[RMDB]
RNA sequence: GGGAACGACUCGAGUAGAGUCGAAAAGUCAAGAUGUGUAGGAUAGGUGGGAGGCUUUGAAGUGUGGACGCCAGUCUGCAUGGAGCCGACCUUGAAAUAGCACCCUUUAAUGGAAAAACAAAGUGAAGAUUGGUGAUUUUUUCGAAAAUCACCAAUCAAAAGAAACAACAACAACAAC
Reactivity to DMS in 0.01 (KOAc 150mM, MgCl2 10mM, bicine 150mM(pH8.5), 24C), signal-to-noise 3, nucleotides 027 to 126: g000u010c070a050a040g010a060u010g010u000g030u000a070g010g000a090u010a050g010g030u000g010g010g030a300g010g000c000u000u000u000g000a060a160g010u000g010u000g000g010a020c010g010c120c160a140g010u000c000u010g010c000a020u000g010g000a020g000c020c000g000a090c020c010u020u010g010a040a050a050u000a110g000c050a050c020c040c020u000u000u010a050a110u010g010g010a030a020a080a080a100c130a050a080a100g010u000g000a130a100
Reactivity to 2A3 in 0.01 (KOAc 150mM, MgCl2 10mM, bicine 150mM(pH8.5), 24C), signal-to-noise 2, nucleotides 027 to 126: g110u090c040a040a050g070a120u120g020u040g070u160a030g060g080a050u010a040g010g130u040g030g140g050a100g000g060c000u300u150u050g030a090a020g000u000g000u010g030g010a000c040g050c110c050a050g010u000c000u000g000c010a010u020g040g020a000g000c010c010g020a040c000c000u000u010g020a000a000a000u080a020g020c010a020c000c020c040u010u030u090a130a120u210g000g070a090a080a080a030a000c060a010a130a050g110u150g040a110a010

The data come from the RNA Mapping Database (RMDB), library M2PK90. An RNA of 177 nucleotides, treated with DMS and 2A3 and read out base by base. The RNA was probed in 150 mM KOAc, 10 mM MgCl2 and 150 mM bicine (pH 8.5) at 24 C. In probing experiments dimethyl sulfate is read out at A N1 and C N3, which are open when not base-paired. For 2A3 the reverse transcriptase was SuperScript II with manganese.